[RMDB]
RNA sequence: GGGAACGACUCGAGUAGAGUCGAAAAUCUAAGCAUGUCUGAGGGCGUGAUAUACCUCCGGCGUGAAUUGCAUAUAAGGCGCCAUAAUGUACGCUUUAUUUCAAAUAUCGCAUUGGUGGCGGCAUUACGUAUAUACUAGCUUCGGCUAGUAUAUACGAAAAGAAACAACAACAACAAC
Reactivity to DMS in 0.01 (KOAc 150mM, MgCl2 10mM, bicine 150mM(pH8.5), 24C), signal-to-noise 6, nucleotides 027 to 126: u010c030u010a110a120g000c010a010u000g010u000c010u000g010a040g000g010g030c060g010u010g010a110u010a160u010a040c010c000u000c010c060g020g010c000g000u000g000a060a090u000u000g010c180a100u000a090u010a060a050g000g010c010g040c070c020a050u010a040a060u000g000u000a090c100g010c140u000u000u000a020u010u010u010c200a060a060a050u000a030u000c050g000c020a090u000u000g040g020u000g000g000c030g010g010c060a080u010u010a100
Reactivity to 2A3 in 0.01 (KOAc 150mM, MgCl2 10mM, bicine 150mM(pH8.5), 24C), signal-to-noise 5, nucleotides 027 to 126: u030c010u020a030a040g080c010a010u030g010u020c000u010g000a020g000g020g020c080g050u070g110a040u060a020u100a270c000c000u000c010c010g010g010c000g000u010g020a030a100u160u100g050c090a020u120a010u040a240a090g080g020c000g000c010c000a040u070a090a040u090g050u050a060c060g000c040u060u080u040a050u030u130u100c040a070a110a020u070a030u060c000g000c030a030u020u060g090g000u010g010g000c040g030g030c010a020u070u140a040